Background
This 177-nucleotide RNA was probed chemically with DMS and 2A3. For 2A3 the reverse transcriptase was SuperScript II with manganese.
[RMDB]
RNA sequence: GGGAACGACUCGAGUAGAGUCGAAAAAGUCCAGCUCGCCGCCGGUCAGCAUCUCGCGCAUGGCGGAGAGGCGGUCGCCGUAGAAGCCCGAGCAGUUUCCGAUACGCACGGCACCACAGUCAGGGGCACUCCCAAUUCAUUUCGAUGAAUUGGGAGUAAAAGAAACAACAACAACAAC
Reactivity to DMS in 0.01 (KOAc 150mM, MgCl2 10mM, bicine 150mM(pH8.5), 24C), signal-to-noise 4, nucleotides 027 to 126: a100g000u000c020c010a130g020c020u000c030g010c030c000g030c020c020g020g010u000c120a180g010c020a110u020c180u000c150g020c020g000c040a080u000g010g010c000g020g000a030g010a030g020g020c040g000g010u010c070g020c050c020g020u000a090g000a130a120g010c030c010c020g000a100g010c100a100g010u000u000u000c030c030g000a130u000a060c090g010c080a060c050g000g000c030a070c030c010a080c090a080g000u010c090a100g010g000g010g010c160
Reactivity to 2A3 in 0.01 (KOAc 150mM, MgCl2 10mM, bicine 150mM(pH8.5), 24C), signal-to-noise 2, nucleotides 027 to 126: a000g070u010c020c010a040g010c020u020c030g040c030c020g000c010c020g100g040u190c040a030g010c020a100u130c070u130c270g060c000g000c060a080u140g020g000c030g010g000a030g020a000g000g000c010g000g010u010c030g010c010c000g000u030a060g060a170a030g050c020c000c010g010a010g010c060a040g000u030u070u000c030c040g050a090u060a140c050g000c020a020c010g000g030c000a000c000c000a020c010a030g060u130c060a030g030g000g000g000c010

Source information
DMS (dimethyl sulfate) methylates the pairing face of unpaired adenines and cytosines.